[RMDB]
RNA sequence: GGGAACGACUCGAGUAGAGUCGAAAAAGCGGAGUAUACUACGGUAUACUCCGCAAGGCACAUGUGAUGAACAGCAAAGGGACUUAAUGCUGAAACUUGAUGUGAUAUUGUGAUGUCUGAUGUGCAAUCCAGUGUUGUCCUUCGGGACAACACUGGAAAAAGAAACAACAACAACAAC
Reactivity to 2A3 in 0.01 (KOAc 150mM, MgCl2 10mM, bicine 150mM(pH8.5), 24C), signal-to-noise 1, nucleotides 027 to 126: a010g000c000g000g000a000g000u000a000u000a000c000u040a010c270g000g050u000a000u000a000c000u000c000c000g090c000a000a000g040g070c000a000c000a100u040g000u040g030a050u080g060a150a060c040a000g030c000a000a100a000g140g000g010a070c010u130u210a120a050u150g000c060u080g000a040a060a080c030u050u150g050a110u120g030u000g160a050u030a030u080u160g040u060g090a110u090g020u000c000u000g160a090u010g010u010g000c050a130a040
Reactivity to DMS in 0.01 (KOAc 150mM, MgCl2 10mM, bicine 150mM(pH8.5), 24C), signal-to-noise 1, nucleotides 027 to 126: a030g000c000g030g000a020g010u000a000u000a000c000u000a200c210g110g010u000a000u000a000c020u000c010c040g010c000a000a070g000g030c020a010c000a070u000g000u010g000a020u000g000a150a170c000a040g000c070a030a200a170g000g000g000a100c040u000u000a090a170u000g000c030u000g000a200a050a140c100u000u070g000a040u000g000u000g020a130u000a080u020u000g000u010g010a200u000g020u000c020u070g000a000u020g010u040g000c000a090a090